[RMDB]
RNA sequence: GGGAACGACUCGAGUAGAGUCGAAAAGCUGCCUCGUCUUGAGUUCCUUCGCCUGCGCGGAGCUUAAAGACGUCAAUUGAGUGGGCUAGUUUCGGUGAGCGUUCGCGGUGCCGAAGCGAAAUUUAAGCGAACUCGCCUGAUACACAUCCUGUCGACGCACCCUCAGUUUGUUCGCAAACUGAGGGUGAAAAGAAACAACAACAACAAC
Reactivity to 2A3 in 0.01 (KOAc 150mM, MgCl2 10mM, bicine 150mM(pH8.5), 24C), signal-to-noise 1, nucleotides 027 to 156: g000c040u090g140c000c010u030c000g000u000c000u020u010g020a020g000u000u080c000c000u090u090c210g020c030c010u080g000c050g000c020g000g020a010g010c010u010u060a110a000a000g000a020c000g050u180c050a070a140u040u220g020a030g010u040g000g010g000c000u000a010g000u000u000u000c000g000g010u020g050a030g000c080g010u060u030c030g010c000g030g000u020g000c000c000g000a000a000g010c000g000a050a000a000u260u270u100a170a050g000c010g000a000a000c000u040c000g040c000c040u030g000a060u070a070c120a010c000a050u030c020c040u010g020u060c010g000a050c050g010